RNA sequence: GGGAACGACUCGAGUAGAGUCGAAAAGAUAUGGAAGCCAAAGAGCGCGGAACCGUGGUCGGAAACGACCACUCAGUACGAACUACGCUUGAUGGCUUCCUAAGUCAAAGCGUGCUUCGGCACGCAACAUGACCUAGUAGUUCGCUACUAGGUCAUGAAAAGAAACAACAACAACAAC
Reactivity to 2A3 in 0.01 (KOAc 150mM, MgCl2 10mM, bicine 150mM(pH8.5), 24C), signal-to-noise 2, nucleotides 027 to 126: g020a000u040a040u140g000g000a000a000g000c000c000a000a010a010g010a000g010c060g000c020g010g000a010a010c000c000g000u010g000g010u000c010g010g040a090a100a100c000g000a000c000c000a000c000u000c000a010g000u010a010c010g040a130a080c110u200a040c210g000c000u020u020g000a010u020g010g000c000u000u010c000c000u000a000a000g000u010c020a050a110a060g000c010g000u000g000c010u060u100c280g120g000c000a000c010g000c000a000a000
Reactivity to DMS in 0.01 (KOAc 150mM, MgCl2 10mM, bicine 150mM(pH8.5), 24C), signal-to-noise 6, nucleotides 027 to 126: g000a050u000a300u000g010g000a010a020g020c000c000a000a060a300g010a000g000c010g020c010g000g010a120a080c200c300g000u000g000g020u000c000g010g000a100a090a160c000g010a000c000c000a010c000u000c040a050g000u000a110c030g020a060a060c120u020a300c030g020c000u000u010g000a300u000g000g000c010u000u000c000c000u010a000a040g010u000c040a100a060a110g000c000g010u000g000c010u010u010c150g010g020c010a000c000g010c010a030a060